This 177-nucleotide RNA was probed chemically with 2A3. The reactions ran in a buffer of 150 mM KOAc, 10 mM MgCl2 and 150 mM bicine (pH 8.5), at 24 C. It was measured as part of the RMDB library OK1LIB. Reactivities are given for positions 27 through 126.
RNA sequence: GGGAACGACUCGAGUAGAGUCGAAAAAUUUCAACAACAAAUAAUAAAGCAAUCAAACAUUUACCAAUUGGUAUCAUUGUUUUAGAUGAAAAUGAUCACAUCGAAUGGGUUAACCAAUUUAUGACAAAACUCGCUGUAGGUUCGCCUACAGCGAGUUAAAAGAAACAACAACAACAAC
Reactivity to 2A3 in 0.01 (KOAc 150mM, MgCl2 10mM, bicine 150mM(pH8.5), 24C), signal-to-noise 1, nucleotides 027 to 126: a020u150u080u130c000a110a000c000a000a000c000a000a300a300u210a050a060u160a080a200a130g000c000a100a030u130c200a200a040a040c000a300u000u110u060a050c000c000a050a080u180u000g000g000u050a000u000c030a030u000u000g060u300u250u300u220a080g000a070u080g000a000a000a000a030u180g030a000u090c050a110c000a000u000c000g050a080a000u030g040g000g000u100u100a000a000c000c000a000a080u000u180u130a300u160g050a000c140a210a260